[RMDB]
RNA sequence: GGGAACGACUCGAGUAGAGUCGAAAAGAAAGAAAGAAAGAACUCUGUAAAGUGAGGGAGUGCCUGGACCAGGUCGGCGGGCCUGCUCCAGUUUCCUUCGCUCUGCUCAACGGGCAGACCGCCACAAAAAACGCGUGGCUGUUCGCAGCCACGCGAAGUUUACAAUAAACUUCGGUUUAUUGUAAACAAAAGAAACAACAACAACAAC
Reactivity to 2A3 in 0.01 (KOAc 150mM, MgCl2 10mM, bicine 150mM(pH8.5), 24C), signal-to-noise 1, nucleotides 027 to 156: g030a000a050a010g030a000a060a040g060a090a120a020g030a110a050c040u130c080u110g040u220a110a080a050g020u020g030a030g020g000g000a030g020u150g060c010c000u000g000g010a010c020c000a000g000g000u010c050g000g060c000g030g030g010c000c000u000g010c010u000c000c020a010g030u010u050u000c000c000u030u020c020g050c010u030c010u020g020c000u030c030a110a110c060g020g000g000c040a020g000a070c000c020g000c040c040a130c070a020a170a000a060a020a010c020g010c150g000u010g000g110c000u000g020u090u110c150g010c100a000g010c000c000a020c000g000c000g000a010a010